About this RNA
The record gives the reactivity of an RNA of 177 nucleotides to DMS and 2A3. Values cover nucleotides 27 to 126. The reactions ran in a buffer of 150 mM KOAc, 10 mM MgCl2 and 150 mM bicine (pH 8.5), at 24 C.
RNA sequence: GGGAACGACUCGAGUAGAGUCGAAAAACUGCAUUUAAUAACAAUGUAGCAAUUCCUCAUAGCAUGAAAAUGGAUGCUUUAAAAACCGGAGUAUGUUUAAUUGUUAACGAUAAACCAGUUAAAUGGGAAUAGGUGCAUUAUUCGUAAUGCACCUAUUAAAAGAAACAACAACAACAAC
Reactivity to DMS in 0.01 (KOAc 150mM, MgCl2 10mM, bicine 150mM(pH8.5), 24C), signal-to-noise 6, nucleotides 027 to 126: a190c000u000g010c010a030u000u000u010a110a160u050a150a130c180a040a000u000g030u000a010g000c050a100a100u000u010c010c000u010c180a120u040a020g040c010a020u000g000a080a080a110a150u020g000g030a050u000g010c000u000u020u050a040a070a050a080a060c120c100g000g000a160g010u010a050u010g000u010u000u010a090a130u020u000g000u020u020a070a050c100g010a100u030a060a040a150c060c000a040g000u000u060a040a090a070u000g000g010g010
Reactivity to 2A3 in 0.01 (KOAc 150mM, MgCl2 10mM, bicine 150mM(pH8.5), 24C), signal-to-noise 3, nucleotides 027 to 126: a000c010u000g010c010a000u110u080u020a290a300u240a230a020c100a050a010u020g020u000a010g010c060a060a130u010u030c070c020u110c070a110u060a000g000c000a000u030g160a110a050a040a050u200g200g100a060u030g010c000u070u090u110a200a250a180a040a020c050c030g120g050a100g120u160a180u240g060u000u030u120a240a150u040u050g010u010u090a080a050c050g010a050u050a100a210a050c000c000a050g020u090u110a050a220a220u120g020g060g030